RNA sequence: GGGAACGACUCGAGUAGAGUCGAAAACAGACACCACUUCAAUGGCCCCAUACCAAAGAAGUUUACAACUGGAGUUUAUGACGGGUUCCCUAAUCCGCUUGUCAAAUUUGUGGAGUGAGAUCUCAAGAUGGGCUCUAUGUGGUGGAUACACGAAAGACGGUAAUUAUAUAUUCGUAUAUAAUUACCGAAAAGAAACAACAACAACAAC
Reactivity to DMS in 0.01 (KOAc 150mM, MgCl2 10mM, bicine 150mM(pH8.5), 24C), signal-to-noise 2, nucleotides 027 to 156: c020a120g000a160c010a060c000c010a030c030u000u010c020a030a300u000g000g030c060c020c090c170a110u000a180c050c010a040a100a300g000a050a050g020u000u000u000a080c070a090a120c060u010g000g010a140g010u000u000u040a040u020g000a090c100g020g060g010u000u000c030c020c020u010a080a050u000c000c010g020c040u020u000g000u000c070a110a090a180u000u010u000g000u000g000g000a110g020u010g010a100g000a040u010c000u000c060a040a120g000a110u010g000g020g030c020u000c020u000a070u000g010u000g000g040u000g020g000a080u000a040c050a070c060g000a060a050a210g020a250
Reactivity to 2A3 in 0.01 (KOAc 150mM, MgCl2 10mM, bicine 150mM(pH8.5), 24C), signal-to-noise 2, nucleotides 027 to 156: c000a000g110a000c000a030c060c010a000c000u070u050c090a040a110u110g000g000c000c000c000c000a020u070a120c000c000a030a030a030g040a010a000g000u050u060u150a030c020a050a010c010u030g100g010a040g070u070u110u060a090u150g020a040c020g000g040g060u030u060c010c010c000u010a020a070u000c000c000g020c020u010u020g040u020c050a050a050a200u100u050u100g050u020g010g020a020g010u040g010a070g000a030u060c000u020c040a080a000g040a080u040g000g000g000c000u000c000u020a050u060g040u000g000g000u010g000g010a040u180a020c050a010c040g150a030a010a100g080a020
This 207-nucleotide RNA was probed chemically with DMS and 2A3. Source: RMDB library OK3TST, as collected in RNAgym. The reactions ran in a buffer of 150 mM KOAc, 10 mM MgCl2 and 150 mM bicine (pH 8.5), at 24 C. The DMS profile rests on 2,855 reads. DMS adducts were read by reverse transcription with MarathonRT. For 2A3 the reverse transcriptase was SuperScript II with manganese.